[RMDB]
Structure probing data (2A3 and DMS) for a 177-nucleotide construct. For 2A3 the reverse transcriptase was SuperScript II with manganese. The DMS profile rests on 4,254 reads. DMS adducts were read by reverse transcription with MarathonRT.
RNA sequence: GGGAACGACUCGAGUAGAGUCGAAAAGAUAUGGAAUCCUCCUUUUGACGUCGACGGUUCGGAAACGAACCUGCCGACGAUAAGGGGAUUCCUAAGUCAAAGUGUGAUAGCUUCGGCUAUCACACAACCUGUCAUAGUACUUCGGUACUAUGACAGGAAAAGAAACAACAACAACAAC
Reactivity to 2A3 in 0.01 (KOAc 150mM, MgCl2 10mM, bicine 150mM(pH8.5), 24C), signal-to-noise 5, nucleotides 027 to 126: g000a010u060a020u130g000g010a000a000u020c010c050u300c050c020u100u140u090u200g300a180c130g030u000c000g010a030c010g000g010u000u020c010g010g000a030a030a020c000g000a000a010c000c010u030g000c010c010g010a010c050g010a010u070a010a010g000g000g020g000a000u010u010c000c000u000a040a000g010u010c060a100a110a140g000u010g000u000g010a010u010a000g000c020u060u060c300g120g000c010u010a000u000c000a000c000a010c000a000a010
Reactivity to DMS in 0.01 (KOAc 150mM, MgCl2 10mM, bicine 150mM(pH8.5), 24C), signal-to-noise 3, nucleotides 027 to 126: g000a030u000a300u010g000g000a000a010u000c000c000u010c010c010u000u000u000u000g000a210c100g030u000c000g000a020c020g000g000u000u000c000g000g000a060a070a140c010g000a000a000c000c000u010g080c010c010g010a010c010g020a040u000a020a020g030g010g000g000a010u000u000c000c000u000a010a070g000u010c020a080a100a140g020u000g020u000g000a010u000a000g020c000u000u010c260g030g000c010u000a000u000c000a000c000a000c000a030a040